[RMDB]
Structure probing data (2A3) for a 207-nucleotide construct. Reactivities are given for positions 27 through 156. Conditions: 150 mM KOAc, 10 mM MgCl2 and 150 mM bicine (pH 8.5), 24 C. 2A3 adducts were read by reverse transcription with SuperScript II with manganese. The data come from the RNA Mapping Database (RMDB), library OK3TST.
RNA sequence: GGGAACGACUCGAGUAGAGUCGAAAACGACCUCCUGACGGGUCGGACAUAGCGUCAGGAUCAUCCGUGGCAGUCACCACGGUAAUCAUGUGCCUGAUGAUGGUUUUCCAUCUUAAUCUGACUGUGUCGUAGCAGUCUACAGUACUAUGACAUUAGACACGGGAGCAUGAUUCGUCAUGCUCCCGUGAAAAGAAACAACAACAACAAC
Reactivity to 2A3 in 0.01 (KOAc 150mM, MgCl2 10mM, bicine 150mM(pH8.5), 24C), signal-to-noise 2, nucleotides 027 to 156: c010g010a000c000c030u120c000c000u000g030a000c010g000g000g000u030c030g010g070a040c080a020u130a020g060c020g000u010c000a000g000g020a020u060c030a010u010c000c010g010u020g000g020c030a050g090u060c010a030c000c000a000c000g000g030u000a000a070u090c020a030u110g040u100g000c000c020u060g000a060u070g010a000u010g080g070u030u040u170u060c000c000a050u120c030u040u100a140a070u130c130u100g010a000c000u000g000u020g030u120c030g080u090a020g000c010a000g010u030c020u090a040c000a040g050u000a000c020u050a020u030g050a020c000a090u080u220a090g030a000